[RMDB]
RNA sequence: GGGAACGACUCGAGUAGAGUCGAAAAGAUAUGGAGCUGAUGGAGAGCGAGUGGAAUGGCGAUGAAAGCUAUCGGAAACGAUAGCUGGAGCCAUUCCACGAGCUCUAUGAAGUCAGCUCCUAAGUCAGUACAUAGUUACGUUCGCGUAACUAUGUACAAAAGAAACAACAACAACAAC
Reactivity to DMS in 0.01 (KOAc 150mM, MgCl2 10mM, bicine 150mM(pH8.5), 24C), signal-to-noise 2, nucleotides 027 to 126: g030a030u000a300u000g010g000a010g030c010u000g020a020u000g010g000a020g020a050g010c000g000a300g010u000g010g000a020a010u000g000g010c000g020a170u010g000a110a090a050g020c010u010a000u000c000g020g000a130a110a220c000g050a010u000a010g000c000u000g010g000a060g000c020c000a000u000u010c000c020a000c030g010a160g000c000u010c000u000a040u040g000a140a140g010u000c000a010g010c000u010c000c010u000a010a070g010u010c090a130
Conditions: 150 mM KOAc, 10 mM MgCl2 and 150 mM bicine (pH 8.5), 24 C. Structure probing data (DMS) for a 177-nucleotide construct.